Structure probing data (2A3 and DMS) for a 207-nucleotide construct. Values cover nucleotides 27 to 156. The 2A3 profile rests on 5,074 reads. It was measured as part of the RMDB library RNAMAK. The RNA was probed in 150 mM KOAc, 10 mM MgCl2 and 150 mM bicine (pH 8.5) at 24 C.
[RMDB]
RNA sequence: GGGAACGACUCGAGUAGAGUCGAAAAGUACUAAGUUCGCUUAGUACAAAAAGCGUACUACGAAUAGAGGAUGAACUACCUGCACUUCCCAAAUAGGAAGUGUCCAGGCAUCUACCCACCUAUUCGUAUCGCAAAAAUGGCAUGUUCGCAUGCCAAACCUACAUCCUGAGUUCGCUCAGGAUGUAGGAAAAGAAACAACAACAACAAC
Reactivity to 2A3 in 0.01 (KOAc 150mM, MgCl2 10mM, bicine 150mM(pH8.5), 24C), signal-to-noise 4, nucleotides 027 to 156: g000u010a000c000u010a000a030g010u020u080c110g090c140u000u000a000g000u010a000c010a010a120a010a000a000g030c040g030u080a050c050u000a000c010g010a000a010u010a000g020a010g020g010a010u010g010a050a040c040u030a080c180c000u000g020c000a000c000u000u030c010c010c060a140a230a160u240a070g000g000a010a010g010u000g050u090c100c010a010g010g000c000a000u010c000u050a150c020c020c010a080c000c000u050a010u060u000c010g010u010a020u250c000g000c030a040a040a030a030a060u080g010g010c010a010u020g010u060u150c240g010c160a010u010g040c000c000a010a030a030
Reactivity to DMS in 0.01 (KOAc 150mM, MgCl2 10mM, bicine 150mM(pH8.5), 24C), signal-to-noise 2, nucleotides 027 to 156: g030u000a030c010u000a030a040g020u000u000c300g020c010u000u000a000g050u010a010c000a050a030a040a110a170g010c040g020u000a050c060u010a010c010g010a030a020u000a010g020a300g000g000a090u030g010a100a300c040u040a080c010c000u000g000c000a050c010u000u000c000c000c030a010a160a150u000a020g020g010a050a000g000u000g010u010c060c150a020g010g000c010a070u000c080u010a130c010c000c010a220c060c010u020a030u020u000c010g040u000a000u000c020g010c020a010a030a040a100a220u000g030g010c000a010u010g020u030u000c300g000c010a010u030g000c000c000a010a050a060